[RMDB]
RNA sequence: GGGAACGACUCGAGUAGAGUCGAAAACGACCGCAGUUCGCUGCGGUCGAAAAGAACUGACUACCGUUCGCCUAGCCGGUGUCAGUUUAAGGGGGGAGAUUAAAACCCUGACGUUCGCGUCAGGGAAUCCUACUUUAACGUUCGCGUUAAAGUAGGAAAAAGAAACAACAACAACAAC
Reactivity to 2A3 in 0.01 (KOAc 150mM, MgCl2 10mM, bicine 150mM(pH8.5), 24C), signal-to-noise 1, nucleotides 027 to 126: c020g020a020c000c000g000c000a000g020u060u080c180g000c090u000g020c010g000g000u010c010g010a000a000a000a020g020a020a010c000u000g020a000c040u140a040c110c010g020u090u140c060g100c000c120u110a040g040c040c000g010g010u010g000u030c020a030g000u020u040u080a170a130g010g010g000g000g070g000a100g000a080u100u160a060a030a000a040c000c010c020u010g020a030c030g020u020u050c300g000c000g100u000c000a010g020g000g010a000a000
Reactivity to DMS in 0.01 (KOAc 150mM, MgCl2 10mM, bicine 150mM(pH8.5), 24C), signal-to-noise 4, nucleotides 027 to 126: c030g010a000c000c000g040c000a010g020u000u000c190g020c000u000g010c000g000g020u000c000g000a010a030a100a150g010a020a010c000u000g000a020c010u010a020c000c000g000u000u000c140g000c120c070u000a120g010c300c010g000g000u010g000u000c000a000g000u010u000u000a040a160g000g010g010g010g010g020a200g010a120u000u010a040a080a100a130c000c000c000u000g010a010c000g030u000u000c220g020c000g000u000c010a010g010g010g020a000a020